[RMDB]
RNA sequence: GGGAACGACUCGAGUAGAGUCGAAAAGAGCUCCAGAAAGCGCACGAGCGACAGGGUGUUGCAAUACGACCCCAGCAGGGCGUCGAACUCGACGUCGUACAGGCUGUUUGCAUCGGAGCGCACGCGGGUGGAAGGUUCAAUUCGUUGAACCUUCCACAAAAGAAACAACAACAACAAC
Reactivity to DMS in 0.01 (KOAc 150mM, MgCl2 10mM, bicine 150mM(pH8.5), 24C), signal-to-noise 3, nucleotides 027 to 126: g060a120g020c050u020c000c020a100g000a170a050a080g020c010g000c030a080c010g000a100g000c030g000a070c080a090g000g010g030u020g000u000u030g000c110a160a050u050a230c080g000a060c010c010c000c080a180g000c090a070g000g000g000c010g020u000c010g020a120a170c260u040c020g020a020c050g040u000c000g010u020a070c190a080g000g000c000u000g040u000u020u030g020c020a040u010c030g010g000a120g000c030g010c020a020c140g000c130g020g000
Reactivity to 2A3 in 0.01 (KOAc 150mM, MgCl2 10mM, bicine 150mM(pH8.5), 24C), signal-to-noise 4, nucleotides 027 to 126: g090a020g000c040u020c040c000a030g120a130a100a000g000c010g000c000a000c030g010a020g020c010g060a010c020a070g000g000g040u120g060u070u110g020c070a060a000u080a150c120g070a050c050c000c000c000a020g030c010a050g060g010g000c000g000u000c020g030a220a140c090u040c200g020a010c010g010u010c000g020u110a070c020a020g250g000c020u050g040u030u090u270g050c060a150u010c010g030g000a160g060c000g000c000a050c060g060c090g050g030
Structure probing data (DMS and 2A3) for a 177-nucleotide construct. The DMS profile rests on 3,135 reads. For 2A3, 2,704 sequencing reads were counted. The reactions ran in a buffer of 150 mM KOAc, 10 mM MgCl2 and 150 mM bicine (pH 8.5), at 24 C. The data come from the RNA Mapping Database (RMDB), library OK1LIB. Reactivities are rounded to 0.1 and cut off at 0 and 3.